[RMDB]
RNA sequence: GGGAACGACUCGAGUAGAGUCGAAAAAAGAUAUGGAAAGCGACGAAGGCUGAUGACCCAGGGUGGAGUAGGAUCGGAAACGAUCCUAUGAGGCCCUGGCAAGGCUGAACACGCUUUCCUAAGUCAACCAAGGAUUAUACUUCGGUAUAAUCCUUGGAAAAGAAACAACAACAACAAC
Reactivity to DMS in 0.01 (KOAc 150mM, MgCl2 10mM, bicine 150mM(pH8.5), 24C), signal-to-noise 3, nucleotides 027 to 126: a130a060g010a050u000a300u010g020g000a040a000a010g010c020g010a270c130g030a300a260g010g010c010u000g010a090u020g050a100c300c020c000a020g000g030g060u000g000g000a300g010u000a000g000g010a000u000c000g020g000a100a080a120c000g000a000u000c000c000u010a000u000g000a300g000g000c020c000c000u000g000g000c000a040a090g000g020c020u000g000a110a090c300a210c000g000c000u000u000u000c000c000u000a010a060g000u010c030a120a150
Reactivity to 2A3 in 0.01 (KOAc 150mM, MgCl2 10mM, bicine 150mM(pH8.5), 24C), signal-to-noise 2, nucleotides 027 to 126: a020a000g020a020u060a030u060g000g010a000a000a000g040c000g240a240c120g100a300a080g140g010c010u050g050a300u090g000a040c010c000c000a000g000g030g000u060g000g010a040g000u000a000g000g000a000u010c000g020g000a050a030a000c000g010a000u020c020c000u010a000u010g000a010g030g030c020c010c020u000g000g000c010a020a040g000g000c040u090g030a050a020c060a010c000g000c030u000u010u000c000c000u010a010a010g020u000c020a020a080

The data come from the RNA Mapping Database (RMDB), library TTRDES. Chemical mapping of a 177-nucleotide RNA with DMS and 2A3. Reactivities are given for positions 27 through 126. The DMS profile rests on 2,606 reads. The RNA was probed in 150 mM KOAc, 10 mM MgCl2 and 150 mM bicine (pH 8.5) at 24 C. The 2A3 profile rests on 5,786 reads.